[RMDB]
RNA sequence: GGGAACGACUCGAGUAGAGUCGAAAAGUAGUGGGUGACGUUAUUGAUGCAACUGGUUACAUUUGCUACACUGGUUUGAAUUCGCGUGGCCAUUAUACCUACUACGAUAAUCGUAAUGGUUUAAUGGAAUCUCUAGGAGGUUCGCCUCCUAGAGAUUAAAAGAAACAACAACAACAAC
Reactivity to DMS in 0.01 (KOAc 150mM, MgCl2 10mM, bicine 150mM(pH8.5), 24C), signal-to-noise 4, nucleotides 027 to 126: g010u000a030g020u010g010g000g010u000g020a100c110g010u000u000a160u010u010g010a110u010g010c060a020a050c050u000g010g000u000u000a090c050a110u000u000u000g020c070u000a080c080a080c050u000g010g010u010u000u010g010a070a150u000u000c060g000c120g010u000g010g000c000c010a010u000u010a030u000a030c010c000u000a110c130u000a010c000g010a200u010a080a140u000c020g010u000a020a060u000g010g010u010u000u000a020a030u010g000g010
Reactivity to 2A3 in 0.01 (KOAc 150mM, MgCl2 10mM, bicine 150mM(pH8.5), 24C), signal-to-noise 2, nucleotides 027 to 126: g100u070a000g030u060g020g040g000u010g020a040c020g010u030u060a110u150u190g120a080u130g030c010a050a050c060u040g040g000u060u050a020c010a120u130u100u140g010c030u030a020c020a040c060u020g020g130u100u100u170g070a030a080u130u030c040g000c030g140u080g040g020c000c010a000u030u040a010u040a020c000c010u000a040c020u000a020c010g010a040u190a060a070u200c010g030u010a000a040u060g030g030u000u030u060a030a020u000g020g070
The record gives the reactivity of an RNA of 177 nucleotides to DMS and 2A3. For 2A3, 1,648 sequencing reads were counted. The DMS profile rests on 4,694 reads. In probing experiments dimethyl sulfate is read out at A N1 and C N3, which are open when not base-paired. Source: RMDB library OK2TST, as collected in RNAgym. The RNA was probed in 150 mM KOAc, 10 mM MgCl2 and 150 mM bicine (pH 8.5) at 24 C.